[RMDB]
RNA sequence: GGGAACGACUCGAGUAGAGUCGAAAAGAUUACGUGUCGUUGUGGAAUCGAUACUACGCACGAGAGUCCAAGGUCUCUGUAGUACGUCCGCUGGUGACGUCUUUGGAGUCACGUUCGAUAUACGAAAGGUAAGUUCUAGGUUCGCCUAGAACUUACCAAAAGAAACAACAACAACAAC
Reactivity to DMS in 0.01 (KOAc 150mM, MgCl2 10mM, bicine 150mM(pH8.5), 24C), signal-to-noise 2, nucleotides 027 to 126: g030a160u000u060a040c150g000u000g040u000c000g020u030u010g000u050g000g010a030a110u020c010g010a080u010a000c070u000a060c010g000c140a030c100g010a050g010a040g030u000c060c060a070a040g010g000u010c050u000c010u000g060u020a030g000u010a040c050g000u010c000c000g010c090u020g000g010u000g020a020c020g020u010c010u010u030u010g000g000a060g000u000c030a070c060g030u070u010c030g020a020u010a090u010a080c100g010a110a080a110
Reactivity to 2A3 in 0.01 (KOAc 150mM, MgCl2 10mM, bicine 150mM(pH8.5), 24C), signal-to-noise 2, nucleotides 027 to 126: g060a050u000u260a010c060g000u020g040u060c040g040u040u060g030u020g050g160a070a010u140c020g000a000u040a080c040u050a030c000g000c040a010c060g080a070g020a000g100u040c080c070a050a030g150g010u000c000u000c000u040g050u030a020g040u050a030c000g010u000c010c000g090c130u100g230g020u130g000a000c010g020u020c000u040u000u200g030g010a000g010u000c000a010c160g000u070u030c010g020a000u000a030u050a180c070g120a100a050a010
Source: RMDB library OK1LIB, as collected in RNAgym.
An RNA of 177 nucleotides, treated with DMS and 2A3 and read out base by base.
The RNA was probed in 150 mM KOAc, 10 mM MgCl2 and 150 mM bicine (pH 8.5) at 24 C.
DMS adducts were read by reverse transcription with MarathonRT.